The record gives the reactivity of an RNA of 177 nucleotides to 2A3.
RNA sequence: GGGAACGACUCGAGUAGAGUCGAAAAACGCUGGCCAUUGGCUUUGCGGUCGCCAAGGAUCUUGCCGCCGGACGGUUGGUGCACGUGACCGGUCCUGGGCUGGAUCGCGCCGGCGAGUGGUGUGUGGGGACAAAGACGACUUCGGUCGUCUUUGUCCAAAAGAAACAACAACAACAAC
Reactivity to 2A3 in 0.01 (KOAc 150mM, MgCl2 10mM, bicine 150mM(pH8.5), 24C), signal-to-noise 1, nucleotides 027 to 126: a010c010g000c040u040g000g020c020c000a130u000u210g110g000c010u090u030u300g180c120g000g070u050c000g000c000c000a080a030g170g000a050u040c010u010u000g020c010c010g000c050c090g020g030a060c020g020g000u030u010g000g080u260g040c110a040c120g150u130g010a010c000c080g020g170u060c000c010u000g000g010g000c000u010g050g000a000u010c020g030c140g000c020c050g000g000c010g050a040g010u070g000g090u080g000u000g010u010g150g110